The record gives the reactivity of an RNA of 177 nucleotides to DMS and 2A3.
For 2A3 the reverse transcriptase was SuperScript II with manganese.
Values cover nucleotides 27 to 126.
It was measured as part of the RMDB library OK2TRN.
The DMS profile rests on 15,480 reads.
The RNA was probed in 150 mM KOAc, 10 mM MgCl2 and 150 mM bicine (pH 8.5) at 24 C.

RNA sequence: GGGAACGACUCGAGUAGAGUCGAAAAAAAGGGUGCCCAUCCCAUGAAUGGAUUGCGGCUCAGGAAAAACGUCCUGAUUUUUCAGUAUAUUGCACAUGAAGCAUUCCCCCAGGAGUAUAGCAGUAUCGGUUUACUAUCUAUUCGUAGAUAGUAAACCAAAAGAAACAACAACAACAAC
Reactivity to DMS in 0.01 (KOAc 150mM, MgCl2 10mM, bicine 150mM(pH8.5), 24C), signal-to-noise 9, nucleotides 027 to 126: a050a050a070g000g000g020u000g010c020c020c030a120u010c020c010c040a190u010g010a100a080u010g000g010a080u010u000g010c100g010g000c070u000c030a050g010g000a030a050a050a090a080c200g010u000c020c010u000g000a110u010u010u000u000u000c040a090g010u000a060u010a080u010u000g010c040a070c120a080u000g000a080a090g000c050a120u000u000c020c010c010c080c050a090g010g010a090g010u000a070u000a080g010c050a040g010u000a060u000c140
Reactivity to 2A3 in 0.01 (KOAc 150mM, MgCl2 10mM, bicine 150mM(pH8.5), 24C), signal-to-noise 5, nucleotides 027 to 126: a000a010a020g080g020g020u080g000c020c000c000a040u010c040c000c010a160u230g100a140a100u120g030g040a030u030u120g020c080g010g010c020u010c050a020g060g050a020a070a030a060a060c040g060u000c010c010u010g050a070u100u040u010u030u060c010a010g080u050a060u010a030u190u100g030c030a040c070a130u160g110a090a020g020c030a050u030u060c010c000c000c020c000a020g070g010a050g050u110a040u110a170g020c050a010g070u130a060u190c020